Conditions: 150 mM KOAc, 10 mM MgCl2 and 150 mM bicine (pH 8.5), 24 C. This 177-nucleotide RNA was probed chemically with DMS and 2A3. For DMS, 2,002 sequencing reads were counted.
RNA sequence: GGGAACGACUCGAGUAGAGUCGAAAAGAUAUGGAACCAUGAAACUUCUUGGAUUUAUGGGAGAACCGUAUUCGGAAACGAAUACUCAGUAUCCCAUUGUCAGAAGGAGUACGUGGUUCCUAAGUCAUCGUAAUCAGAGGUUCGCCUCUGAUUACGAAAAAGAAACAACAACAACAAC
Reactivity to DMS in 0.01 (KOAc 150mM, MgCl2 10mM, bicine 150mM(pH8.5), 24C), signal-to-noise 3, nucleotides 027 to 126: g020a020u010a300u010g000g000a000a030c000c020a000u010g010a200a170a080c020u000u000c000u010u000g000g000a020u000u000u000a010u000g020g000g010a030g020a110a190c300c300g040u000a000u000u000c010g010g000a160a130a210c000g000a010a010u000a000c010u000c010a080g000u000a090u000c000c000c000a000u000u000g010u010c000a000g000a030a020g000g000a000g010u000a130c050g060u000g000g000u000u000c010c000u000a040a080g000u000c040a170
Reactivity to 2A3 in 0.01 (KOAc 150mM, MgCl2 10mM, bicine 150mM(pH8.5), 24C), signal-to-noise 2, nucleotides 027 to 126: g040a030u100a040u230g020g000a000a010c020c020a040u020g010a220a240a070c020u030u010c000u050u100g060g000a030u300u300u270a020u080g000g000g000a040g000a010a000c020c020g000u000a000u000u010c000g000g010a060a090a000c020g000a010a000u010a000c010u010c000a000g050u000a010u000c020c010c010a000u000u000g000u000c000a000g200a170a020g000g010a020g000u020a040c060g000u000g000g000u000u000c000c000u000a010a000g030u010c010a050
For 2A3, 3,616 sequencing reads were counted. For 2A3 the reverse transcriptase was SuperScript II with manganese.